[RMDB]
RNA sequence: GGGAACGACUCGAGUAGAGUCGAAAAGUAAGAAAGAAAGCGGUUGGGUGGGUCCAUCGACCGUCGUGGCGUAUUCGGACGCUUUACCACGACGCGAGGAAAUAGCGAGACCGACCACCCCCUUUAACAGAGGUAUAGUAGUUCGCUACUAUACCAACCUAAGAGUUGUGUUCGCACAACUCUUAGGAAAAGAAACAACAACAACAAC
Reactivity to DMS in 0.01 (KOAc 150mM, MgCl2 10mM, bicine 150mM(pH8.5), 24C), signal-to-noise 1, nucleotides 027 to 156: g000u020a000a080g010a120a090a080g000a040a110a070g020c240g020g040u000u010g000g000g010u000g010g050g000u000c020c000a080u000c060g000a070c150c020g010u000c000g010u000g010g000c010g040u000a130u000u010c100g080g020a190c090g040c110u010u010u010a010c000c000a020c000g020a020c000g000c020g000a070g000g000a020a040a060u020a130g000c080g020a160g020a130c040c010g010a070c010c000a040c000c000c000c020c020u010u000u000a110a210c160a170g010a130g020g030u020a000u000a020g020u000a010g000u010u010c190g070c010u020a030c000u000a010u010a010c000c000a010a060
Reactivity to 2A3 in 0.01 (KOAc 150mM, MgCl2 10mM, bicine 150mM(pH8.5), 24C), signal-to-noise 2, nucleotides 027 to 156: g050u060a110a020g010a220a090a010g040a040a050a030g060c060g090g050u190u110g140g000g000u080g010g050g000u000c040c030a120u180c020g020a040c040c000g000u000c000g000u000g000g010c070g060u160a100u070u120c050g060g040a020c040g030c000u040u060u150a050c030c010a000c000g000a000c000g000c000g010a030g000g030a040a040a170u090a040g040c010g020a040g020a090c000c000g040a020c020c010a000c010c010c000c010c010u000u070u080a160a090c110a030g130a050g070g000u000a000u000a000g000u000a000g000u040u060c200g000c100u000a000c000u000a000u000a000c010c000a000a020